Source: RMDB library OK3TST, as collected in RNAgym.
An RNA of 207 nucleotides, treated with 2A3 and read out base by base.
Conditions: 150 mM KOAc, 10 mM MgCl2 and 150 mM bicine (pH 8.5), 24 C.
For 2A3, 379 sequencing reads were counted.

RNA sequence: GGGAACGACUCGAGUAGAGUCGAAAAACUCUUUUCAAUAUAUCAGAGAUCACAAUACACUCAAUAAACAGACUAUAAUUCUUUUUAUAUGAGUUAUACAGUGAAUUGACUUUGAUGUCACAGCUGUGAAUAAGUAUUGAUUCUAUAUUUAUUGCUCGGAUCUAGGAAAGUUCGCUUUCCUAGAUCCAAAAGAAACAACAACAACAAC
Reactivity to 2A3 in 0.01 (KOAc 150mM, MgCl2 10mM, bicine 150mM(pH8.5), 24C), signal-to-noise 1, nucleotides 027 to 156: a000c060u050c030u120u210u020u020c000a020a020u040a030u020a070u150c170a020g070a010g010a040u080c060a010c000a060a010u040a010c000a020c040u000c000a010a000u030a010a000a000c000a010g010a000c030u110a110u140a300a220u230u010c000u000u000u030u000u000a020u030a220u040g000a000g000u010u000a030u010a030c000a000g030u050g100a210a090u040u000g000a030c040u260u090u180g140a120u200g000u000c000a000c040a030g000c000u000g010u000g010a060a120u180a170a060g030u000a010u000u000g030a030u100u000c000u020a000u030a060u120u070u060a000u040u060g030c080u120c130